[RMDB]
RNA sequence: GGGAACGACUCGAGUAGAGUCGAAAAGGCGAAUAUAGCGCAAUAAAAGGAUACCAUAAGCUACGACGCCGAAUGAGAAACGAAGGCACUCGAAUGGUAAUACUCGCAAAGCUGCGACGAAGAGCCAAAUAUAAUUGUUAUUCGUAACAAUUAUAUUAAAAGAAACAACAACAACAAC
Reactivity to DMS in 0.01 (KOAc 150mM, MgCl2 10mM, bicine 150mM(pH8.5), 24C), signal-to-noise 9, nucleotides 027 to 126: g000g010c010g000a080a120u030a250u010a040g010c010g020c150a090a090u030a060a090a100a090g000g010a140u020a060c060c050a060u020a080a120g000c020u010a040c070g000a300c040g010c010c000g000a080a080u020g010a070g000a080a040a050c020g000a120a100g000g000c110a040c050u000c030g010a090a090u010g000g000u000a030a060u010a110c230u010c000g010c050a040a120a120g010c150u010g010c010g000a040c070g010a070a060g010a160g000c010c020a040
Reactivity to 2A3 in 0.01 (KOAc 150mM, MgCl2 10mM, bicine 150mM(pH8.5), 24C), signal-to-noise 7, nucleotides 027 to 126: g020g000c010g050a070a010u150a010u040a080g020c010g000c030a030a050u110a090a120a020a020g100g010a040u050a080c020c010a030u030a080a030g000c020u050a020c040g120a010c020g000c000c010g010a040a060u120g020a010g030a050a080a000c020g030a050a020g010g000c010a010c020u010c010g060a050a030u050g010g010u030a020a020u080a060c010u010c010g020c020a030a100a070g090c110u050g000c010g010a020c010g020a040a040g010a010g040c000c000a000